[RMDB]
RNA sequence: GGGAACGACUCGAGUAGAGUCGAAAAAGCCGUUUCGACGGCUAACAAACCUUUGUGUUGUGGUUGUGACAUGCGAGAUGGGUGGCCCAUUGGGCCAUAGUCUCGCAACAGCACAACGUAACAUCAACACUCUGGUCUACCGGCCUUUCGAGGCCAAAGUGUAUGCGAACUUCGGUUCGCAUACACUAAAAGAAACAACAACAACAAC
Reactivity to 2A3 in 0.01 (KOAc 150mM, MgCl2 10mM, bicine 150mM(pH8.5), 24C), signal-to-noise 2, nucleotides 027 to 156: a010g000c000c000g000u070u050u080c260g140a090c000g000g000c000u060a120a010c060a040a140a000c000c010u000u050u000g010u000g000u000u000g000u000g120g000u000u020g000u010g040a160c000a090u040g000c010g000a000g030a010u040g300g150g050u050g000g000c010c020c120a270u150u250g000g000g000c000c000a000u000a020g000u000c000u000c000g010c000a000a000c010a000g000c000a000c000a000a000c000g060u060a030a040c060a110u210c000a000a010c000a010c000u020c000u000g000g000u020c070u090a220c170c160g000g010c030c010u180u100u070c300g080a020g030g040c020c030a000a000
The record gives the reactivity of an RNA of 207 nucleotides to 2A3. 2A3 adducts were read by reverse transcription with SuperScript II with manganese.